[RMDB]
RNA sequence: GGGAACGACUCGAGUAGAGUCGAAAACGGGCGUAUGUCCGGGACAUACAACGAGGGGUGGUGAGGGCGGAGGUGUUGAUGAGAUCAGCGUGACUGCGCUGGUCUGCUUCUAGUUUCUCCCUGAGAGAGCAAGUAGUAUCUUCGGAUACUACUUGCUAAAAGAAACAACAACAACAAC
Reactivity to DMS in 0.01 (KOAc 150mM, MgCl2 10mM, bicine 150mM(pH8.5), 24C), signal-to-noise 1, nucleotides 027 to 126: c050g030g010g030c150g000u020a020u010g010u000c010c150g010g010g030a120c040a070u000a010c120a060a100c110g000a110g000g000g020g020u030g010g000u000g020a180g000g000g000c140g010g000a020g010g000u000g000u010u010g000a070u010g000a000g000a040u000c010a010g010c000g000u000g000a100c300u040g000c000g000c010u000g020g020u000c000u000g020c070u000u020c050u020a080g020u000u000u000c010u000c010c010c110u020g000a200g020a100g000